Chemical mapping of a 177-nucleotide RNA with 2A3 and DMS. The data come from the RNA Mapping Database (RMDB), library RFMREP.
RNA sequence: GGGAACGACUCGAGUAGAGUCGAAAAAGAAGAUUGAAGCCUUUGCCAGCCAUUCUUUCCCUUUUUGCUUCCAAACUCCUCAACUGGGAACCUUCAUAUGUGCAGUAUUUAUAUUGGAUCAUACUGGCAGCUACAUAAUCUUCGGAUUAUGUAGCUGAAAAGAAACAACAACAACAAC
Reactivity to 2A3 in 0.01 (KOAc 150mM, MgCl2 10mM, bicine 150mM(pH8.5), 24C), signal-to-noise 1, nucleotides 027 to 126: a010g080a010a000g010a020u020u070g040a140a020g020c010c020u100u090u130g020c000c010a030g000c010c030a060u010u040c020u050u070u030c000c000c000u010u040u010u060u040g010c010u060u000c010c020a130a110a110c040u030c040c010u040c010a040a060c070u060g020g010g040a020a000c000c000u060u040c020a090u080a060u210g040u040g070c020a000g030u020a040u060u140u010a190u010a040u070u130g090g010a040u040c020a010u030a050c010u060g050g060
Reactivity to DMS in 0.01 (KOAc 150mM, MgCl2 10mM, bicine 150mM(pH8.5), 24C), signal-to-noise 2, nucleotides 027 to 126: a090g010a110a090g010a100u000u020g000a100a080g020c040c030u000u000u000g010c040c040a110g020c030c040a050u000u000c050u010u000u010c000c000c020u000u010u010u010u000g000c080u020u010c020c070a080a100a140c070u000c010c000u000c020a050a090c030u010g010g010g000a070a100c100c030u000u000c090a080u000a050u010g020u000g010c040a010g000u000a040u000u010u000a080u010a140u030u010g000g000a110u010c100a030u010a050c070u000g020g010